This 177-nucleotide RNA was probed chemically with 2A3 and DMS. It was measured as part of the RMDB library OK1LIB. 2A3 adducts were read by reverse transcription with SuperScript II with manganese. The 2A3 profile rests on 1,764 reads. Conditions: 150 mM KOAc, 10 mM MgCl2 and 150 mM bicine (pH 8.5), 24 C. Reactivities are given for positions 27 through 126.
RNA sequence: GGGAACGACUCGAGUAGAGUCGAAAAGAAGAGAAAGGAGACACAUGGACAGUCUCCAGAGGUUCCUAAGGACUCGAUCGCGCCUGCCGGGAAUCAUGGACCCCCGGUUGUCCAUGAAAGAAGAAGACAUGGUAGGUCAGUUCGCUGACCUACCAUGAAAAGAAACAACAACAACAAC
Reactivity to 2A3 in 0.01 (KOAc 150mM, MgCl2 10mM, bicine 150mM(pH8.5), 24C), signal-to-noise 2, nucleotides 027 to 126: g090a050a020g060a000g020a080a110a050g040g000a050g020a040c030a010c040a190u070g030g040a010c000a050g010u000c000u000c020c000a000g020a000g000g010u010u040c010c000u030a060a130g080g000a010c020u000c090g010a050u110c070g000c020g030c030c000u000g000c020c070g000g030g000a050a090u060c080a080u100g060g010a040c020c000c000c000c010g000g000u000u010g020u000c010c000a000u000g070a030a080a050g140a050a020g040a020a000g050a000
Reactivity to DMS in 0.01 (KOAc 150mM, MgCl2 10mM, bicine 150mM(pH8.5), 24C), signal-to-noise 2, nucleotides 027 to 126: g000a130a070g020a090g010a060a090a110g000g030a010g000a010c050a090c190a060u010g010g020a060c130a130g000u000c010u000c010c000a070g000a090g000g020u010u000c010c000u010a100a050g000g000a060c050u000c080g000a140u000c020g040c300g010c020c000u000g000c060c020g000g000g000a110a070u020c050a030u030g010g000a090c130c040c030c070c020g010g000u000u000g000u020c010c030a000u000g000a050a090a050g030a030a030g020a100a040g010a210